[RMDB]
RNA sequence: GGGAACGACUCGAGUAGAGUCGAAAAGAAGUACCUCCCGGCGAUCAUCGCCGCCCUCGCGCUCGACCCGAAGAAGGCGGAGCGGGCGAUCGCGGCAUGACGCACGGAAGGGAGGGAACGGAGUGCCGGACGUAUUCAUCGCGCUGGAGGAGGCAGCGCGCUACCGAUUCUUCGGAAUCGGUAGCGCAAAAGAAACAACAACAACAAC
Reactivity to 2A3 in 0.01 (KOAc 150mM, MgCl2 10mM, bicine 150mM(pH8.5), 24C), signal-to-noise 1, nucleotides 027 to 156: g110a040a010g000u040a030c000c000u000c000c000c000g000g000c020g060a300u000c000a000u000c070g010c030c010g030c040c000c000u020c030g030c000g000c000u040c040g300a300c000c000c000g090a180a140g010a060a000g090g040c010g040g000a040g000c000g000g060g050c050g020a070u090c130g020c000g000g000c000a000u040g000a000c010g000c030a060c030g050g080a110a110g000g000g010a020g000g000g000a000a010c060g000g000a020g000u080g040c000c050g040g040a070c020g020u060a060u060u120c100a080u160c090g040c000g000c100u060g030g060a000g030g010a040g070g000c010a000g030c000